[RMDB]
RNA sequence: GGGAACGACUCGAGUAGAGUCGAAAAAGAAACAUCACUAUUUACCAGGUCAGGUCCGGAAGGAAGCAGCCAAGGCAGAUGACGCGUGUGCCGGGAUGAUGCUGGCAGGGCAAAAUAGUAAAAAAAAUCUUACAUUUUACUUCGGUAAAAUGUAAGAAAAAGAAACAACAACAACAAC
Reactivity to 2A3 in 0.01 (KOAc 150mM, MgCl2 10mM, bicine 150mM(pH8.5), 24C), signal-to-noise 1, nucleotides 027 to 126: a000g070a060a060a010c030a020u120c030a000c020u000a030u050u010u010a050c010c010a000g040g000u020c020a010g020g050u000c000c030g060g050a040a030g060g030a140a000g000c030a030g080c010c030a060a070g010g000c020a050g050a270u070g070a190c070g020c060g130u180g060u050g030c010c010g000g020g000a050u100g000a020u100g110c000u010g000g030c020a020g060g020g000c000a000a010a020a020u030a020g000u090a140a010a070a000a000a010a000a030
Reactivity to DMS in 0.01 (KOAc 150mM, MgCl2 10mM, bicine 150mM(pH8.5), 24C), signal-to-noise 2, nucleotides 027 to 126: a090g000a160a060a100c090a050u000c060a040c010u000a010u000u000u000a090c010c030a050g010g010u010c020a040g000g000u010c000c050g000g030a080a060g010g010a100a160g000c040a070g020c020c020a040a080g020g010c030a040g010a090u000g020a090c090g020c080g040u000g010u000g000c010c020g000g000g000a080u000g010a070u000g020c030u000g000g000c020a020g000g000g020c020a040a040a010a020u010a030g000u010a000a000a000a060a070a050a100a100